Chemical mapping of a 177-nucleotide RNA with 2A3 and DMS.
The RNA was probed in 150 mM KOAc, 10 mM MgCl2 and 150 mM bicine (pH 8.5) at 24 C.
It was measured as part of the RMDB library OK1LIB.
For DMS, 7,505 sequencing reads were counted.
2A3 adducts were read by reverse transcription with SuperScript II with manganese.
Values are in units of 0.01, from 0 to 300, in steps of 10.
RNA sequence: GGGAACGACUCGAGUAGAGUCGAAAAGAAAAAGACGUGGAAGUACAGAAACGGCAAUGUACUGAAGACAUGAGUGAAAUGCCGUAAACUCUUGUCUGAGAUACGAAAGUAUCGACACGUCGAAAAAGGGUAUUAUAUGCUUCGGCAUAUAAUACCCAAAAGAAACAACAACAACAAC
Reactivity to 2A3 in 0.01 (KOAc 150mM, MgCl2 10mM, bicine 150mM(pH8.5), 24C), signal-to-noise 4, nucleotides 027 to 126: g110a010a130a010a010a010g010a010c000g000u020g040g050a040a080g020u010a000c010a000g070a090a220a030c040g080g000c040a020a030u020g000u020a010c010u070g020a010a000g000a000c000a000u040g000a000g010u030g060a080a100a120u210g050c010c020g010u030a110a010a000c000u010c000u010u010g000u000c000u000g050a050g000a080u010a000c020g040a130a000a030g000u000a000u000c000g030a020c000a000c000g000u000c010g020a030a000a000a010a000
Reactivity to DMS in 0.01 (KOAc 150mM, MgCl2 10mM, bicine 150mM(pH8.5), 24C), signal-to-noise 4, nucleotides 027 to 126: g010a040a060a080a160a100g020a000c000g030u000g000g020a140a060g000u000a010c000a030g010a090a150a130c150g040g020c100a110a140u010g010u000a000c010u000g000a180a010g000a030c010a000u000g000a000g000u000g000a070a050a040u020g020c060c060g000u010a110a090a040c000u000c000u000u000g010u000c020u000g000a250g000a010u000a000c010g000a100a070a130g020u000a010u000c000g000a140c000a000c000g010u000c010g000a030a030a070a110a110